[RMDB]
Overview: This 207-nucleotide RNA was probed chemically with 2A3. The RNA was probed in 150 mM KOAc, 10 mM MgCl2 and 150 mM bicine (pH 8.5) at 24 C. The 2A3 profile rests on 1,132 reads. The data come from the RNA Mapping Database (RMDB), library OK3TST.

RNA sequence: GGGAACGACUCGAGUAGAGUCGAAAAGAUUGUUCGGCUGUUACUCUCUCGCGGAGUCGAGAGACUUUGUAGAAACAACGAAGGAUUAACUCCGCUAAGAGCAUACAGUAAGCAUAGAUACGUCAAAUCUCAAAUUGUGCAUCUACUGAUAUCCAGCCGCUAGGUGUACUUUCGAGUACACCUAGCGAAAAGAAACAACAACAACAAC
Reactivity to 2A3 in 0.01 (KOAc 150mM, MgCl2 10mM, bicine 150mM(pH8.5), 24C), signal-to-noise 3, nucleotides 027 to 156: g080a090u090u110g000u030u050c050g050g010c010u020g020u020u020a040c010u000c000u000c000u010c040g010c000g000g000a020g000u050c090g060a080g000a000g000a140c040u050u000u000g040u010a110g110a290a190a060c080a030a000c030g010a010a010g010g000a010u040u030a010a000c000u000c000c000g000c010u040a090a000g020a000g030c050a080u080a140c010a010g010u000a030a030g010c010a020u040a040g080a080u070a070c060g130u080c110a090a120a110u030c080u040c090a120a150a130u080u060g030u020g070c010a080u010c040u090a040c020u020g040a060u010a050u120c020c050a030g030c030